[RMDB]
RNA sequence: GGGAACGACUCGAGUAGAGUCGAAAACAGCGGCAACAACAUGAACCCUGUCUUCAUAUACUUGGUGCCGAAGCCCUGCCCCCGCGCGCGUAUCGUGCUCCCUGGUUUGUGCGCUCGGCCGGUACGCAAUUAUAAUACCAUUCGUGGUAUUAUAAUUAAAAGAAACAACAACAACAAC
Reactivity to 2A3 in 0.01 (KOAc 150mM, MgCl2 10mM, bicine 150mM(pH8.5), 24C), signal-to-noise 5, nucleotides 027 to 126: c030a010g080c010g020g000c020a020a010c000a020a010c010a080u040g020a020a020c050c060c110u110g060u080c060u050u040c020a020u100a020u020a210c040u020u040g030g010u020g020c020c000g010a050a030g060c000c000c020u040g030c020c000c000c010c000g030c010g000c000g000c000g020u020a020u040c020g040u080g040c020u060c020c000c010u020g020g080u090u130u110g100u070g020c030g020c030u010c010g010g000c010c000g010g000u010a010c010g000c000
Reactivity to DMS in 0.01 (KOAc 150mM, MgCl2 10mM, bicine 150mM(pH8.5), 24C), signal-to-noise 9, nucleotides 027 to 126: c140a110g010c030g010g000c010a030a030c030a030a040c200a050u000g000a040a050c080c120c110u010g000u010c120u000u000c020a030u000a090u000a110c210u000u000g000g010u000g000c010c000g000a090a110g000c030c020c010u000g000c020c010c010c010c020g020c190g020c130g010c020g000u000a010u000c010g010u010g010c020u000c030c030c020u000g000g010u000u010u010g010u000g010c030g010c060u000c100g000g010c010c000g000g010u000a010c030g010c040

The data come from the RNA Mapping Database (RMDB), library OK2TRN. Chemical mapping of a 177-nucleotide RNA with 2A3 and DMS. Values cover nucleotides 27 to 126. The reactions ran in a buffer of 150 mM KOAc, 10 mM MgCl2 and 150 mM bicine (pH 8.5), at 24 C. For 2A3, 15,203 sequencing reads were counted. For 2A3 the reverse transcriptase was SuperScript II with manganese. DMS adducts were read by reverse transcription with MarathonRT.